[RMDB]
RNA sequence: GGGAACGACUCGAGUAGAGUCGAAAACCCCCAAGUUUCGACUUGGGGGAAUUAAAAUCAGCGGUAUAUAAUUAGCUCGCGUUACCGCUGAACGCGAGCAUAGAGCAAUGCGCUUCGGCGCAUUGAACCAUACUACGACUUUCGAGUCGUAGUAUGGAAAAGAAACAACAACAACAAC
Reactivity to DMS in 0.01 (KOAc 150mM, MgCl2 10mM, bicine 150mM(pH8.5), 24C), signal-to-noise 3, nucleotides 027 to 126: c010c000c000c000c000a010a000g000u000u010u010c130g010a020c000u000u010g010g000g000g010g010a000a000u010u000a060a050a100a110u010c010a000g020c000g000g040u000a070u000a020u000a040a040u010u000a120g010c000u000c000g010c000g010u000u010a070c020c000g000c000u000g000a010a010c000g010c010g010a000g030c000a140u010a060g010a130g010c010a010a000u000g010c010g020c000u000u010c200g010g010c000g020c000a000u000u000g000a070a150
Reactivity to 2A3 in 0.01 (KOAc 150mM, MgCl2 10mM, bicine 150mM(pH8.5), 24C), signal-to-noise 4, nucleotides 027 to 126: c000c000c000c000c000a010a010g010u010u060u150c160g090a030c010u010u010g020g000g000g000g040a010a010u150u100a070a040a010a070u020c000a030g010c030g140g220u020a060u010a020u010a110a170u130u150a060g000c000u000c000g000c010g000u000u020a160c000c000g000c000u000g000a000a000c000g000c000g000a000g010c020a010u120a020g140a010g050c000a010a000u000g000c010g000c000u020u030c250g060g000c000g000c000a000u000u000g000a000a000
The record gives the reactivity of an RNA of 177 nucleotides to DMS and 2A3. For 2A3 the reverse transcriptase was SuperScript II with manganese.